[RMDB]
RNA sequence: GGGAACGACUCGAGUAGAGUCGAAAAGAUGUGGCAAUUCAUCACCAGGCAAGCCUCGCAACCUUUGACGACACGCUCGCUGCCGCAGCACGCACAAGGAGCGUGCCCGCUAGCACAAACGGCGCAGCCCAGGCUUUAGGUUCGCCUAAAGCCUGGGAAAAGAAACAACAACAACAAC
Reactivity to DMS in 0.01 (KOAc 150mM, MgCl2 10mM, bicine 150mM(pH8.5), 24C), signal-to-noise 4, nucleotides 027 to 126: g020a060u000g030u020g000g000c070a070a100u010u010c030a050u010c010a180c040c020a070g000g020c060a070a080g000c020c040u000c080g000c040a050a060c060c040u000u000u000g000a110c100g020a060c030a070c050g010c030u010c040g010c060u010g000c030c070g000c100a200g000c040a060c060g010c000a070c110a120a110g000g000a070g020c020g010u000g000c050c050c060g040c060u000a070g030c050a070c110a070a060a120c120g000g010c050g020c130a110g010
Reactivity to 2A3 in 0.01 (KOAc 150mM, MgCl2 10mM, bicine 150mM(pH8.5), 24C), signal-to-noise 3, nucleotides 027 to 126: g030a050u090g010u050g100g010c020a040a070u070u030c020a030u040c020a030c040c020a010g050g000c030a030a120g250c000c020u030c030g030c030a050a100c020c040u060u100u150g080a090c050g020a020c000a000c090g030c020u010c030g090c050u040g030c030c030g000c030a020g020c010a010c030g010c000a030c030a180a130g130g000a060g050c000g010u010g000c000c000c020g040c030u050a040g020c070a000c030a100a120a020c060g030g000c030g000c030a040g010

Structure probing data (DMS and 2A3) for a 177-nucleotide construct. Reactivities are given for positions 27 through 126. Source: RMDB library OK2TST, as collected in RNAgym. The DMS profile rests on 3,305 reads. The reactions ran in a buffer of 150 mM KOAc, 10 mM MgCl2 and 150 mM bicine (pH 8.5), at 24 C.